[RMDB]
Source information:
Chemical mapping of a 177-nucleotide RNA with 2A3 and DMS. It was measured as part of the RMDB library OK1LIB. Conditions: 150 mM KOAc, 10 mM MgCl2 and 150 mM bicine (pH 8.5), 24 C. 2A3 adducts were read by reverse transcription with SuperScript II with manganese. DMS adducts were read by reverse transcription with MarathonRT.

RNA sequence: GGGAACGACUCGAGUAGAGUCGAAAAGUUGACAAACAGGGCUGGGUGCAGCACGCAGCGAUAGGCGAGCAGGGCCAGGGCGAAGUCCGGCGACAGCUGGUUGUUAAAAUACUGGUAACCGGGAAACCAGAUUGGCAACAUUCGUGUUGCCAAUCUGAAAAGAAACAACAACAACAAC
Reactivity to 2A3 in 0.01 (KOAc 150mM, MgCl2 10mM, bicine 150mM(pH8.5), 24C), signal-to-noise 1, nucleotides 027 to 126: g000u000u030g160a100c180a050a180a000c010a100g030g030g040c070u010g040g000g000u010g020c010a070g000c020a020c050g000c000a000g010c040g100a200u200a130g100g000c050g010a020g010c160a090g050g000g000c000c000a000g000g030g000c040g000a040a000g090u000c000c060g020g000c010g010a030c010a000g000c000u040g020g050u050u020g000u030u000a120a200a000a020u110a060c000u030g070g000u000a040a070c040c030g000g010g000a160a000a000c000
Reactivity to DMS in 0.01 (KOAc 150mM, MgCl2 10mM, bicine 150mM(pH8.5), 24C), signal-to-noise 2, nucleotides 027 to 126: g030u000u020g000a090c210a020a090a070c050a120g000g000g000c070u000g000g010g040u010g010c020a050g050c030a090c140g000c040a050g000c040g010a090u010a060g000g000c040g000a110g040c060a080g030g030g000c060c030a130g000g000g070c060g000a050a090g020u000c000c010g000g000c070g010a050c100a140g030c090u000g000g000u000u000g000u020u040a020a070a120a050u020a060c050u000g000g000u040a110a120c030c030g000g000g000a060a030a100c210